[RMDB]
RNA sequence: GGGAACGACUCGAGUAGAGUCGAAAAGAUAUGGAAGCUUGUCAGCGAGAACAGCCGACGAAGGACGCGAAUCGGAAACGAUUCGCGUCCAGAGGCUUCCCUCGCUUGGAUUUAGCUUCCUAAGUCACCUAACUAUUAACUUCGGUUAAUAGUUAGGAAAAGAAACAACAACAACAAC
Reactivity to DMS in 0.01 (KOAc 150mM, MgCl2 10mM, bicine 150mM(pH8.5), 24C), signal-to-noise 2, nucleotides 027 to 126: g010a040u000a300u010g000g000a040a010g020c000u010u010g010u000c020a030g020c020g010a030g010a220a150c220a020g030c020c010g000a170c240g020a160a110g000g000a040c010g000c000g050a040a000u000c000g000g000a120a080a250c020g010a040u000u000c020g040c000g070u020c000c030a000g000a180g000g000c010u000u010c300c180c010u010c000g020c010u000u030g020g000a030u000u000u010a010g010c000u000u000c010c000u010a040a040g000u010c040a190
Reactivity to 2A3 in 0.01 (KOAc 150mM, MgCl2 10mM, bicine 150mM(pH8.5), 24C), signal-to-noise 2, nucleotides 027 to 126: g000a000u100a080u200g000g000a020a000g000c000u030u000g030u000c030a000g000c020g010a010g020a120a060c050a030g000c020c020g180a300c040g040a130a030g000g040a040c040g030c010g140a060a020u030c050g060g050a160a070a070c080g030a040u030u050c040g060c020g020u020c000c000a010g000a000g030g000c010u000u020c020c040c000u000c000g000c000u050u150g080g000a030u300u300u210a000g000c000u000u000c010c000u000a030a020g040u000c020a030